This 207-nucleotide RNA was probed chemically with 2A3. For 2A3 the reverse transcriptase was SuperScript II with manganese.

RNA sequence: GGGAACGACUCGAGUAGAGUCGAAAACGCUCGGUUCGCCGAGCGAAAAAAGCGUACUACGUGCAGCUUGCAUCAGACGACCUCCCAAAUAGGAGGUACCGUCGACGACGCAAGAACUACUGCACGUAUCGCAAAAAGCCGAAGUUCGCUUCGGCAAGGCUCAAUGUAAGUUCGCUUACAUUGAGCCAAAAGAAACAACAACAACAAC
Reactivity to 2A3 in 0.01 (KOAc 150mM, MgCl2 10mM, bicine 150mM(pH8.5), 24C), signal-to-noise 1, nucleotides 027 to 156: c000g000c000u000c000g090g080u050u090c170g110c060c000g000a000g050c000g000a020a000a000a000a000a000g040c040g000u260a080c070u000a010c050g090u000g000c000a000g030c040u000u000g000c000a050u000c000a040g030a070c030g150a290c020c000u020c000c000c000a060a280a280u110a040g000g000a000g000g010u010a050c040c050g000u030c030g000a050c260g000a030c040g090c000a000a000g070a000a030c070u300a040c040u270g000c000a010c050g000u000a000u000c000g010c050a190a190a000a000a000g010c000c000g000a000a000g010u070u300c300g230c070u000u000c000g050g060c000a000a000